[RMDB]
RNA sequence: GGGAACGACUCGAGUAGAGUCGAAAAAUGUUGACAUGGUAGUUCAGUUCUUAACCAAUGACUUGGGGAUGAUGCAAACAAUUACUGUCGUUGGGAUUUAGAGUGUAUUAGUCACGCAUGUAUGGGGUGAAUCAUUAACAUUCGUGUUAAUGAUUCAAAAAGAAACAACAACAACAAC
Reactivity to 2A3 in 0.01 (KOAc 150mM, MgCl2 10mM, bicine 150mM(pH8.5), 24C), signal-to-noise 6, nucleotides 027 to 126: a010u080g020u040u050g020a020c030a080u090g050g060u070a070g030u070u090c040a040g020u060u000c020u030u050a030a020c000c010a010a040u040g040a020c040u080u120g080g010g000g030a030u100g020a030u120g070c070a060a090a060c020a070a070u100u050a070c040u040g000u030c020g030u030u020g010g030g010a050u060u060u080a040g010a010g010u080g010u030a100u070u050a060g030u050c020a000c070g070c020a010u060g030u150a090u150g020g000g020g000
Reactivity to DMS in 0.01 (KOAc 150mM, MgCl2 10mM, bicine 150mM(pH8.5), 24C), signal-to-noise 9, nucleotides 027 to 126: a050u000g010u000u000g010a070c050a080u010g010g010u000a050g010u000u000c060a090g010u000u000c020u000u000a120a150c030c020a030a030u000g000a030c040u010u000g010g010g010g010a100u010g010a100u010g020c210a090a080a090c150a060a050u000u010a070c070u000g010u000c030g030u000u000g000g000g000a140u000u000u000a040g010a040g010u000g010u000a060u000u000a070g010u000c040a040c160g010c060a030u000g000u010a090u000g010g000g000g020